Overview: Conditions: 150 mM KOAc, 10 mM MgCl2 and 150 mM bicine (pH 8.5), 24 C. This 177-nucleotide RNA was probed chemically with 2A3 and DMS. 2A3 is a SHAPE reagent: it acylates the 2'-hydroxyl of flexible nucleotides of all four kinds.
RNA sequence: GGGAACGACUCGAGUAGAGUCGAAAAUGGCCGUCUACUCGGCCUCGAAGUUCGCCGUGCGCGGGCUUACCGAGGCGCUGGAGCUGGAAUGGCGCCGCCACGGUAUUCGUGUGGCCGACCUGAUGCAGCUUUUACGUGACUUCGGUCACGUAAAAGCAAAAGAAACAACAACAACAAC
Reactivity to 2A3 in 0.01 (KOAc 150mM, MgCl2 10mM, bicine 150mM(pH8.5), 24C), signal-to-noise 1, nucleotides 027 to 126: u060g080g000c060c000g030u050c010u040a060c030u000c000g040g000c000c040u020c000g010a000a000g020u100u220c030g020c060c070g210u180g060c220g000c000g000g000g000c000u000u000a000c000c110g160a050g040g020c040g000c130u260g160g020a030g000c060u080g020g140a160a080u080g080g020c120g010c050c000g000c010c000a030c030g070g050u100a170u090u200c060g000u120g030u020g140g000c010c010g010a100c000c050u030g030a060u110g010c020a030
Reactivity to DMS in 0.01 (KOAc 150mM, MgCl2 10mM, bicine 150mM(pH8.5), 24C), signal-to-noise 1, nucleotides 027 to 126: u010g020g030c000c000g040u010c060u000a130c180u020c040g020g000c010c030u000c060g010a040a020g010u000u000c050g030c030c010g070u020g030c210g000c020g040g020g000c010u000u000a100c190c030g010a050g000g010c010g040c160u010g010g010a040g020c040u010g010g000a100a090u000g010g000c020g040c060c000g020c030c010a000c010g010g000u020a140u040u010c070g020u040g020u010g000g000c000c010g010a090c030c080u010g000a160u000g040c070a150